The record gives the reactivity of an RNA of 207 nucleotides to 2A3 and DMS. For 2A3 the reverse transcriptase was SuperScript II with manganese. The reactions ran in a buffer of 150 mM KOAc, 10 mM MgCl2 and 150 mM bicine (pH 8.5), at 24 C.
RNA sequence: GGGAACGACUCGAGUAGAGUCGAAAAUAGGCGAACGAGAGGCCCUCUCGUGUGCGGAGUUGUCACGCUGACAAAAUUGUUAUGAUGUCCGAUUCCGGUAGCAUCGCGGCGAUGAUUUCAUAGGACAUCUUAUGAACCCAAGGGCUUCGGGGAAGCACCAUUUAGGUAGCUUCGGCUACCUAAAUGGAAAAGAAACAACAACAACAAC
Reactivity to 2A3 in 0.01 (KOAc 150mM, MgCl2 10mM, bicine 150mM(pH8.5), 24C), signal-to-noise 3, nucleotides 027 to 156: u160a050g040g000c030g040a050a020c000g010a020g000a020g100g010c010c010c000u000c000u010c000g050u050g060u080g020c050g040g040a090g030u050u040g030u070c020a030c180g040c070u070g010a020c050a050a150a060a110u110u150g060u100u060a070u160g010a010u010g010u020c000c000g060a080u200u040c090c020g040g000u040a010g040c020a040u040c080g030c040g120g000c090g010a030u050g030a020u080u170u140c050a060u090a080g000g000a020c010a040u000c000u010u010a080u040g030a020a030c010c010c020a040a020g010g000g000c000u060u090c040g010g000g000g010a050a010g060c030a030
Reactivity to DMS in 0.01 (KOAc 150mM, MgCl2 10mM, bicine 150mM(pH8.5), 24C), signal-to-noise 2, nucleotides 027 to 156: u000a080g010g020c010g000a060a010c030g000a080g000a110g010g050c060c030c000u010c040u020c050g030u000g020u000g010c020g020g030a190g040u010u010g010u000c030a140c080g050c070u010g010a210c050a030a050a060a120u000u010g020u010u000a080u000g020a040u000g010u010c010c020g000a240u010u000c070c000g000g030u020a090g020c010a050u000c020g010c080g000g040c090g020a060u000g000a120u010u010u030c030a080u000a130g020g000a070c060a040u000c010u000u000a040u000g000a070a120c030c020c020a050a080g000g000g030c020u000u010c040g020g010g020g010a100a090g000c050a170